[RMDB]
RNA sequence: GGGAACGACUCGAGUAGAGUCGAAAAAGGGCAAUUUGAUGUCCUAGCAAUAGACUAGUAUAUUUAUCCAUUGCUGCAUCUUCUUCUGCUUAGAUUAUGAUGCAUGUUUUUUAGCUCCAACUAGUAUCUAAACUUGUCAUGGUCUUUGCUUGAAAGACAGCACUCGACGAUUCGUCGUCGAGUGCUGAAAAGAAACAACAACAACAAC
Reactivity to 2A3 in 0.01 (KOAc 150mM, MgCl2 10mM, bicine 150mM(pH8.5), 24C), signal-to-noise 1, nucleotides 027 to 156: a000g060g000g000c020a070a050u090u020u180g140a140u060g010u050c000c000u030a000g000c020a010a290u110a170g060a150c060u040a030g130u020a060u040a070u160u140u100a120u060c080c000a010u000u050g020c000u020g030c020a080u030c010u120u000c020u000u000c000u030g020c010u070u090a000g000a030u000u010a000u050g000a010u050g000c050a050u110g070u030u010u020u020u020u020a040g010c020u030c050c000a040a110c040u010a000g060u080a130u070c120u090a050a000a020c050u010u040g050u050c000a010u000g000g000u000c000u030u010u000g000c000u040u040g100a130a040a020g050a010

This 207-nucleotide RNA was probed chemically with 2A3. Conditions: 150 mM KOAc, 10 mM MgCl2 and 150 mM bicine (pH 8.5), 24 C. 2A3 adducts were read by reverse transcription with SuperScript II with manganese.